[RMDB]
RNA sequence: GGGAACGACUCGAGUAGAGUCGAAAAUUAAAUAAUCGGGCGCCCGCUGGCUUUGAGAGGCCGUGCCUUUGGGAUAUGGUGAGCCCGUUUCCUUCUCGUUAACCCGACCGGAACCAUAGGCGAAAAACUAUAUAACAGUGUUCGCACUGUUAUAUAGAAAAGAAACAACAACAACAAC
Reactivity to 2A3 in 0.01 (KOAc 150mM, MgCl2 10mM, bicine 150mM(pH8.5), 24C), signal-to-noise 2, nucleotides 027 to 126: u040u020a080a020a100u140a050a080u090c030g020g040g000c040g050c080c060c010g020c150u090g040g000c040u060u230u250g110a240g020a080g060g020c010c020g000u050g030c010c000u080u020u040g060g000g010a080u080a060u290g050g020u070g080a030g000c020c010c010g000u000u020u000c010c000u060u060c070u050c050g050u070u070a090a120c010c030c000g060a080c030c040g000g040a020a010c010c010a010u030a060g020g000c010g040a100a050a000a010a040
Reactivity to DMS in 0.01 (KOAc 150mM, MgCl2 10mM, bicine 150mM(pH8.5), 24C), signal-to-noise 3, nucleotides 027 to 126: u000u010a050a100a130u000a130a120u010c030g010g010g030c060g030c030c030c040g020c150u010g020g000c010u000u000u000g020a190g010a110g010g020c010c030g010u000g000c010c000u000u010u010g020g010g000a110u010a080u010g010g010u000g010a110g010c020c010c010g020u000u000u000c020c010u010u000c050u000c050g010u010u000a080a100c040c020c000g000a060c080c030g010g000a080a100c030c010a020u010a050g020g020c020g000a060a060a060a090a150

Source information
This 177-nucleotide RNA was probed chemically with 2A3 and DMS. For DMS, 2,267 sequencing reads were counted. DMS adducts were read by reverse transcription with MarathonRT. 2A3 adducts were read by reverse transcription with SuperScript II with manganese. Reactivities are given for positions 27 through 126. The RNA was probed in 150 mM KOAc, 10 mM MgCl2 and 150 mM bicine (pH 8.5) at 24 C.